[RMDB]
RNA sequence: GGGAACGACUCGAGUAGAGUCGAAAAGCAUAGUUCGCUAUGCGUCAGCGUACUACCUCGUAGAUCUUUGAUCAAGCCUCCCCACCUAAUUUCCCAAAUAGGAAAUUAGAGGGCUUGGGAGAUCGCGAGGUAUCGCCACGACGCGCUUCGGCGCGUCGCUUAUGAAGAUGUUCGCAUCUUCAUAAGCAAAAGAAACAACAACAACAAC
Reactivity to 2A3 in 0.01 (KOAc 150mM, MgCl2 10mM, bicine 150mM(pH8.5), 24C), signal-to-noise 5, nucleotides 027 to 156: g010c000a010u010a000g020u080u130c250g020c130u000a010u010g010c010g070u070c050a040g030c010g040u080a110c050u010a000c030c000u000c000g030u030a280g000a020u010c010u090u140u160g160a250u300c010a020a010g000c000c000u070c030c050c020c010a020c010c000u000a000a000u010u000u010c010c010c010a130a290a050u120a070g000g000a000a000a000u000u000a000g000a010g000g000g000c000u010u000g000g010g010a010g000a000u000c000g000c000g000a000g000g000u000a000u010c000g010c010c020a080c090g020a000c000g040c010g000c000u050u050c210g120g000c000g000c000g000u010c070
Reactivity to DMS in 0.01 (KOAc 150mM, MgCl2 10mM, bicine 150mM(pH8.5), 24C), signal-to-noise 3, nucleotides 027 to 156: g010c040a020u000a030g020u010u000c260g040c010u000a020u000g000c000g010u000c080a100g040c020g010u010a060c080u000a040c000c000u000c010g020u000a080g020a010u000c010u000u000u000g000a160u020c010a010a030g000c030c010u000c300c090c040c050a300c190c000u000a010a010u000u000u000c000c000c010a030a130a230u000a060g000g010a010a010a020u000u000a000g000a250g010g010g000c020u000u000g000g000g010a040g010a000u000c000g020c010g000a020g010g000u000a000u000c010g020c030c020a060c030g020a000c000g030c010g030c000u000u020c230g040g000c000g050c000g020u010c000

This 207-nucleotide RNA was probed chemically with 2A3 and DMS. It was measured as part of the RMDB library RNAMAK. The 2A3 profile rests on 5,913 reads. Values are in units of 0.01, from 0 to 300, in steps of 10. Values cover nucleotides 27 to 156. For DMS the reverse transcriptase was MarathonRT.